[RMDB]
About this RNA:
The data come from the RNA Mapping Database (RMDB), libraries RFM100 and RFMREP. The record gives the reactivity of an RNA of 177 nucleotides to DMS and 2A3. High 2A3 reactivity points to a flexible backbone, as in loops and unpaired stretches. Values are in units of 0.01, from 0 to 300, in steps of 10. The reactions ran in a buffer of 150 mM KOAc, 10 mM MgCl2 and 150 mM bicine (pH 8.5), at 24 C.
RNA sequence: GGGAACGACUCGAGUAGAGUCGAAAAUGGCGUUAACGGGUAACGGAGAAUUAGGGUUCGAUUCCGGAGAGGGAGCCUGAGAGACGGCUACCACAUCCAUGGAAGGCAGCAGGCGCGUAAAUUACCCAUAAACAUAUAAUUUCGAUUAUAUGUUUAUAAAAGAAACAACAACAACAAC
Reactivity to DMS in 0.01 (KOAc 150mM, MgCl2 10mM, bicine 150mM(pH8.5), 24C), signal-to-noise 9, nucleotides 027 to 126: u020g010g010c050g010u000u010a080a100c100g010g000g010u010a060a090c090g010g010a100g010a080a090u020u020a110g010g000g010u010u010c060g000a170u010u000c030c030g000g000a060g010a170g000g000g000a040g000c010c010u000g000a190g000a150g010a150c150g000g000c010u000a060c010c010a070c100a150u000c010c010a120u020g000g000a070a060g010g000c050a050g000c050a070g010g000c040g000c040g010u010a030a060a100u010u020a090c010c010c020
Reactivity to 2A3 in 0.01 (KOAc 150mM, MgCl2 10mM, bicine 150mM(pH8.5), 24C), signal-to-noise 9, nucleotides 027 to 126: u090g030g000c030g010u050u060a090a020c050g010g040g010u040a050a020c030g060g050a050g050a070a120u170u150a110g040g010g060u060u050c040g030a080u060u040c020c000g010g010a040g020a030g020g030g000a010g000c000c010u040g010a050g000a000g010a040c150g010g000c000u070a150c000c010a040c030a050u010c020c000a010u060g030g020a030a030g050g000c020a010g000c010a010g050g000c020g000c000g030u030a030a050a050u090u060a080c010c000c000